RNA sequence: GGGAACGACUCGAGUAGAGUCGAAAAAUGGGCGCACACACUGAAACUCGCACCCGUCAUCGACAGGCUGGCAGAUAGUUGGGUCGAACAGGGGCAUAUCCGUGAGUCCGACCGUGAGUUGGCACAUGCCGCCGCGAUUCUGCAUGACCAACUCAAGCUGAAUAGUAUCCUUCGGGAUACUAUUCAGAAAAGAAACAACAACAACAAC
Reactivity to 2A3 in 0.01 (KOAc 150mM, MgCl2 10mM, bicine 150mM(pH8.5), 24C), signal-to-noise 3, nucleotides 027 to 156: a000u080g010g000g000c010g000c000a030c020a000c000a000c200u080g060a130a140a050c080u130c130g050c010a230c010c010c020g080u110c090a100u040c000g020a000c010a020g030g070c010u050g030g060c070a020g040a270u050a060g080u070u090g240g020g000u000c010g030a040a020c030a100g000g000g010g000c010a000u030a050u150c050c050g010u030g010a030g030u040c010c040g020a050c000c030g040u050g010a020g000u010u020g000g000c030a010c000a190u020g000c000c030g050c020c040g170c090g110a140u120u060c010u040g000c000a000u000g010a000c020c000a000a000c010u000c000a000a010g020
Reactivity to DMS in 0.01 (KOAc 150mM, MgCl2 10mM, bicine 150mM(pH8.5), 24C), signal-to-noise 1, nucleotides 027 to 156: a090u000g000g000g010c000g020c060a050c040a080c090a170c140u000g000a190a080a120c130u000c140g050c030a070c000c000c000g010u000c020a050u000c000g000a040c000a150g010g000c040u010g020g030c120a160g010a100u000a050g010u000u000g020g040g000u000c000g020a070a030c000a050g000g010g060g040c020a090u010a110u000c030c120g000u030g040a050g030u000c000c000g020a060c010c040g000u010g000a060g000u000u000g020g000c010a070c030a020u000g020c000c030g000c060c100g030c130g000a120u000u000c090u010g000c020a030u010g000a120c020c000a030a040c020u010c010a000a100g050
Chemical mapping of a 207-nucleotide RNA with 2A3 and DMS. The reactions ran in a buffer of 150 mM KOAc, 10 mM MgCl2 and 150 mM bicine (pH 8.5), at 24 C. For DMS the reverse transcriptase was MarathonRT.